[RMDB]
Structure probing data (DMS and 2A3) for a 177-nucleotide construct.
For 2A3 the reverse transcriptase was SuperScript II with manganese.
For 2A3, 2,271 sequencing reads were counted.
RNA sequence: GGGAACGACUCGAGUAGAGUCGAAAAGAUAUGGAAUGUGAACUACUAUGGAGAGGAGGGUCGGAAACGACCCUCUACCCACCUCCAUCGGCACAUUCCUAAGUCAAAAGUCUAGUUCGCUAGACAACAAUCGGAAUAUCUUCGGAUAUUCCGAUUGAAAAGAAACAACAACAACAAC
Reactivity to DMS in 0.01 (KOAc 150mM, MgCl2 10mM, bicine 150mM(pH8.5), 24C), signal-to-noise 3, nucleotides 027 to 126: g000a050u010a300u010g000g010a020a010u010g010u000g000a170a120c130u000a280c090u000a030u000g000g000a040g000a100g000g000a030g000g010g020u000c000g050g010a040a020a150c000g020a000c000c000c000u020c000u000a000c030c070c150a300c090c000u000c000c000a000u000c110g000g000c000a010c000a000u000u000c000c000u000a020a110g000u000c050a080a080a080a100g000u000c000u000a010g010u000u020c250g030c000u000a010g000a020c010a080a170
Reactivity to 2A3 in 0.01 (KOAc 150mM, MgCl2 10mM, bicine 150mM(pH8.5), 24C), signal-to-noise 1, nucleotides 027 to 126: g030a040u100a020u130g010g010a000a020u000g010u010g020a120a140c070u280a050c050u110a300u030g000g000a000g020a010g040g010a010g000g020g010u000c000g000g040a100a050a000c000g000a000c000c040c000u000c000u000a010c000c000c000a010c000c010u040c000c000a010u010c010g060g000c000a000c000a000u000u000c010c000u000a060a010g030u000c000a030a070a090a040g030u000c000u020a000g040u070u060c270g000c110u010a020g020a030c000a020a010
Background:
2A3 is a SHAPE reagent: it acylates the 2'-hydroxyl of flexible nucleotides of all four kinds.